The data come from the RNA Mapping Database (RMDB), library OK3TST. Chemical mapping of a 207-nucleotide RNA with DMS and 2A3. For 2A3, 3,311 sequencing reads were counted. The reactions ran in a buffer of 150 mM KOAc, 10 mM MgCl2 and 150 mM bicine (pH 8.5), at 24 C. DMS adducts were read by reverse transcription with MarathonRT. The DMS profile rests on 8,680 reads.

RNA sequence: GGGAACGACUCGAGUAGAGUCGAAAAAUGUGAAGGAUGUUAAGGCUGUCCGAGAGACACGCCAGCGUGCAUCUCUCAAAGUAGUGUUUGUAACGGAAUUUGUUGUAGAUGCGCGACCCCCGCCCCAGCGACGUGUCGCAUGCCGACGCGUCACAGCUAUUCCAGUGGAAUUCGUUCCACUGGAAUAAAAAGAAACAACAACAACAAC
Reactivity to DMS in 0.01 (KOAc 150mM, MgCl2 10mM, bicine 150mM(pH8.5), 24C), signal-to-noise 3, nucleotides 027 to 156: a120u010g020u010g050a110a070g000g020a110u000g010u010u000a100a110g020g020c000u000g020u000c000c060g010a130g030a170g000a050c020a030c080g020c000c000a080g040c080g010u010g010c000a030u000c000u000c000u000c010a050a050a080g010u000a150g030u000g000u000u000u010g010u000a100a080c030g010g010a110a150u000u000u010g010u010u000g020u000a060g020a070u000g000c000g000c000g010a140c000c000c000c000c000g000c010c000c010c050a160g020c010g010a020c000g010u000g020u000c000g020c060a110u000g020c100c010g010a020c000g020c000g010u010c010a020c040a080g030c110
Reactivity to 2A3 in 0.01 (KOAc 150mM, MgCl2 10mM, bicine 150mM(pH8.5), 24C), signal-to-noise 5, nucleotides 027 to 156: a000u140g030u050g050a080a100g040g020a080u120g030u180u140a130a060g020g000c000u000g030u040c040c060g070a070g010a010g010a120c010a010c110g000c010c010a000g020c000g020u000g000c000a010u000c000u000c000u010c020a020a060a010g040u160a080g010u080g090u110u240u220g180u200a060a020c030g040g080a110a180u040u020u040g130u100u030g030u160a000g000a010u010g000c000g000c000g040a040c000c000c000c010c010g040c030c000c000c000a040g030c040g040a010c000g000u000g000u010c010g000c110a050u240g090c120c000g000a000c000g000c010g000u000c000a010c000a010g010c020